This 207-nucleotide RNA was probed chemically with 2A3.

RNA sequence: GGGAACGACUCGAGUAGAGUCGAAAACAUCACUUCGGUGAUGCUCUCUCCUAAGUCUCCUUGGAGCUUGUCAGGACGAUAAGAUUCGGAAACGAAUCUUUUGACGUCCUUGGAUUUAGCUCCAGGAGAUAUGGACGCUAACCGUUUUCGAACGGAAUGCCAUAGCUCAAUUCGUUGAGCUAUGGCAAAAAGAAACAACAACAACAAC
Reactivity to 2A3 in 0.01 (KOAc 150mM, MgCl2 10mM, bicine 150mM(pH8.5), 24C), signal-to-noise 1, nucleotides 027 to 156: c000a030u000c000a000c000u080u090c250g010g000u030g000a000u000g020c000u000c000u030c000u000c030c000u100a230a110g020u000c000u000c030c050u240u300g000g000a000g000c000u040u000g020u000c000a000g000g000a000c010g060a110u020a030a020g000a000u000u010c020g060g000a070a060a020c010g000a000a000u000c000u010u000u020u080g180a040c010g010u000c000c000u010u100g060g000a000u070u000u270a010g000c010u000c000c000a000g000g000a000g000a000u000a000u020g000g000a030c060g010c150u210a160a090c010c040g000u020u010u090u030c150g000a030a000c000g010g130a100a190
Conditions: 150 mM KOAc, 10 mM MgCl2 and 150 mM bicine (pH 8.5), 24 C. Source: RMDB library RNAMAK, as collected in RNAgym.